[RMDB]
RNA sequence: GGGAACGACUCGAGUAGAGUCGAAAAUGGAGCUUUCUCUAUUACGUAUAUGGCUACUAAUCUAGGUACUUUAUUUGGCCCUUUAAUAUGCGGUUUAGUUGCUAAUGAAUGGUUUGCUAUGAAAAGCAUGCAUCCUCAUAUUCGUAUGAGGAUGCAUAAAAGAAACAACAACAACAAC
Reactivity to 2A3 in 0.01 (KOAc 150mM, MgCl2 10mM, bicine 150mM(pH8.5), 24C), signal-to-noise 3, nucleotides 027 to 126: u110g080g030a040g060c070u070u110u040c030u080c050u070a090u070u200a070c020g050u050a090u010a010u300g060g000c020u030a000c000u000a050a030u000c020u020a010g070g030u110a220c060u150u220u140a160u180u100u110g040g000c020c000c000u020u080u050a280a080u140a090u300g040c070g050g000u030u010u050a040g000u020u040g000c010u050a090a070u130g130a070a030u060g020g070u040u020u070g000c010u030a020u170g130a060a040a000a010g040c010
Reactivity to DMS in 0.01 (KOAc 150mM, MgCl2 10mM, bicine 150mM(pH8.5), 24C), signal-to-noise 4, nucleotides 027 to 126: u020g000g000a040g020c180u000u020u050c020u000c020u020a050u030u000a050c090g020u010a070u010a080u020g020g000c060u000a030c050u010a040a050u020c060u000a100g000g010u020a060c040u020u010u010a040u010u010u030g010g010c030c020c050u020u020u030a070a080u040a060u020g000c110g020g010u000u000u020a080g000u010u000g030c030u010a050a130u010g030a070a060u010g000g020u000u000u000g000c030u010a060u020g000a080a090a120a030g000c050
The record gives the reactivity of an RNA of 177 nucleotides to 2A3 and DMS. Reactivities are rounded to 0.1 and cut off at 0 and 3. Reactivities are given for positions 27 through 126. The RNA was probed in 150 mM KOAc, 10 mM MgCl2 and 150 mM bicine (pH 8.5) at 24 C. High DMS reactivity at an A or C suggests that its Watson-Crick edge is free.